[RMDB]
RNA sequence: GGGAACGACUCGAGUAGAGUCGAAAAGAUUUUUGUUUAUUUUAUGGUGUAUGUAGCCAGACUACUACUGAUAAACGAAUUCCAUAAAGGUAAUCAUCUUGUUCGCAGAAUACGAACAAGUAAUUCCACCUCAAUAACACUUCGGUGUUAUUGAGGUAAAAGAAACAACAACAACAAC
Reactivity to 2A3 in 0.01 (KOAc 150mM, MgCl2 10mM, bicine 150mM(pH8.5), 24C), signal-to-noise 3, nucleotides 027 to 126: g010a040u100u090u080u100u170g040u050u020u000a040u060u070u060u050a240u200g080g000u100g010u070a110u210g010u010a020g030c040c010a100g020a050c020u030a010c010u000a020c010u010g020a030u060a030a020a010c030g000a040a030u060u000c010c000a050u120a080a080a050g110g030u160a030a020u050c070a020u010c000u010u000g010u000u010c020g010c060a060g190a300a050u120a090c000g000a000a000c000a000a000g010u000a000a040u000u020c010c000
Reactivity to DMS in 0.01 (KOAc 150mM, MgCl2 10mM, bicine 150mM(pH8.5), 24C), signal-to-noise 3, nucleotides 027 to 126: g010a050u000u000u000u000u000g000u000u000u000a010u010u010u000u020a090u020g030g030u000g040u000a030u000g030u000a030g010c020c200a140g020a300c050u000a020c010u010a020c010u000g000a040u000a020a030a030c020g000a020a030u000u000c010c010a110u000a030a060a110g010g010u000a000a020u000c080a060u010c000u010u000g000u010u000c000g030c040a230g020a090a120u020a060c000g010a010a010c010a000a010g010u010a030a090u000u000c030c000